[RMDB]
RNA sequence: GGGAACGACUCGAGUAGAGUCGAAAAUGGCGGCUCAAGAACAAGUCUUCGACCUGCGAUCUAGAGAUUGAUUGCGACGUGGCUGACCUUAUGGCCAUACCCGACGACGCAUCGUGGCCUGUCUAUCGCUGUCUAUCAUUUGAUAUUGAGUGUAUGAACGCUCUCACUAUUUCGAUAGUGAGAGCGUAAAAGAAACAACAACAACAAC
Reactivity to 2A3 in 0.01 (KOAc 150mM, MgCl2 10mM, bicine 150mM(pH8.5), 24C), signal-to-noise 4, nucleotides 027 to 156: u120g060g010c030g030g000c010u050c050a080a040g020a080a050c040a050a030g020u040c000u110u020c050g040a070c010c080u060g000c030g000a020u020c040u130a020g030a020g030a170u050u130g030a020u020u120g010c010g030a050c060g100u050g010g030c050u040g060a110c000c030u130u110a170u200g030g020c010c010a000u050a060c030c020c030g040a010c020g000a000c010g020c040a010u050c000g030u040g040g040c010c010u040g040u040c030u020a070u060c020g010c030u020g070u050c040u040a040u050c010a100u100u050u120g120a110u060a090u120u100g030a040g020u070g010u040a090u110g090a030
Reactivity to DMS in 0.01 (KOAc 150mM, MgCl2 10mM, bicine 150mM(pH8.5), 24C), signal-to-noise 2, nucleotides 027 to 156: u000g030g000c040g030g020c010u000c080a070a090g000a150a180c030a030a070g100u000c020u000u000c000g040a080c040c050u000g030c000g000a040u010c050u010a150g010a250g000a130u000u020g030a090u000u000g020c040g000a080c040g000u000g010g000c020u000g010a010c040c030u000u000a120u000g050g020c000c000a100u000a020c020c000c010g030a050c000g000a060c000g000c010a070u010c070g030u020g040g000c050c020u000g000u000c010u010a110u000c030g070c050u010g000u000c070u010a060u000c040a100u000u000u000g020a050u010a280u000u000g000a100g000u000g020u000a120u000g000a150
The data come from the RNA Mapping Database (RMDB), library OK3TST. An RNA of 207 nucleotides, treated with 2A3 and DMS and read out base by base. Values cover nucleotides 27 to 156. DMS adducts were read by reverse transcription with MarathonRT. For 2A3 the reverse transcriptase was SuperScript II with manganese. Conditions: 150 mM KOAc, 10 mM MgCl2 and 150 mM bicine (pH 8.5), 24 C.